[RMDB]
RNA sequence: GGGAACGACUCGAGUAGAGUCGAAAAAGCAAGUAAUGUUAGAGCAAUAAUUCUAGUAUCCGAAUUAGUCUUAUCCCUUGGCUCGCUCUAACGUUAUUACUCCCUAAUACUCCCUUUAACCGCAUCCUUAUACAUCUGCGUUCGCGCAGAUGUAUAAAAAAGAAACAACAACAACAAC
Reactivity to DMS in 0.01 (KOAc 150mM, MgCl2 10mM, bicine 150mM(pH8.5), 24C), signal-to-noise 3, nucleotides 027 to 126: a040g020c140a160a040g000u000a010a010u010g000u000u000a010g020a010g010c020a250a130u000a030a060u000u000c010u000a290g010u000a080u040c200c160g000a020a040u020u000a050g000u000c000u000u010a080u010c010c000c030u010u020g000g030c050u000c130g010c000u000c000u000a010a000c010g010u000u000a020u020u000a090c110u000c000c010c000u020a050a090u010a070c070u010c010c010c020u000u000u000a040a050c050c050g030c080a080u010c030c020
Reactivity to 2A3 in 0.01 (KOAc 150mM, MgCl2 10mM, bicine 150mM(pH8.5), 24C), signal-to-noise 4, nucleotides 027 to 126: a000g120c060a030a000g020u000a010a000u010g000u000u010a000g000a000g000c040a060a090u070a100a020u050u000c010u040a070g090u100a240u070c090c050g020a020a010u010u000a040g000u010c020u020u100a110u160c020c020c000u010u050g040g010c040u050c090g030c000u000c000u000a000a010c020g000u000u000a010u030u030a050c030u020c000c000c000u020a090a030u040a080c040u050c000c000c000u040u070u020a050a040c020c010g030c020a040u040c020c030